The data come from the RNA Mapping Database (RMDB), library VIROID. This 207-nucleotide RNA was probed chemically with 2A3. The reactions ran in a buffer of 150 mM KOAc, 10 mM MgCl2 and 150 mM bicine (pH 8.5), at 24 C. For 2A3 the reverse transcriptase was SuperScript II with manganese.
RNA sequence: GGGAACGACUCGAGUAGAGUCGAAAAAGAAGCGCUCUCUCUCGCCCCUCUAUUCCCUCUCGGCAUAGAGAUGUCCAUAGGCCAGAGGUGAGAUCCAACGGGAUCACAGCUGAUCUAAGGCGGAUAGUGGGGGCACGGGUUUUAUCACCCCCGUGACGUCGUAUGUACUCUUCGGAGUACAUACGACAAAAGAAACAACAACAACAAC
Reactivity to 2A3 in 0.01 (KOAc 150mM, MgCl2 10mM, bicine 150mM(pH8.5), 24C), signal-to-noise 1, nucleotides 027 to 156: a000g090a060a000g060c010g030c020u010c000u000c000u000c020u040c080g020c060c000c020c010u010c000u000a000u000u000c000c010c010u000c010u020c140g000g010c010a020u120a000g100a010g030a050u130g090u000c060c070a190u130a090g020g070c000c000a000g000a000g080g020u030g010a000g000a000u010c010c000a160a300c280g270g020g000a000u000c000a000c000a040g010c030u060g040a090u030c030u050a030a060g010g000c030g020g000a000u000a000g000u170g050g000g000g000g030c000a000c000g000g010g020u010u050u080u140a130u210c010a060c000c060c000c000c000g040u050g030a060c090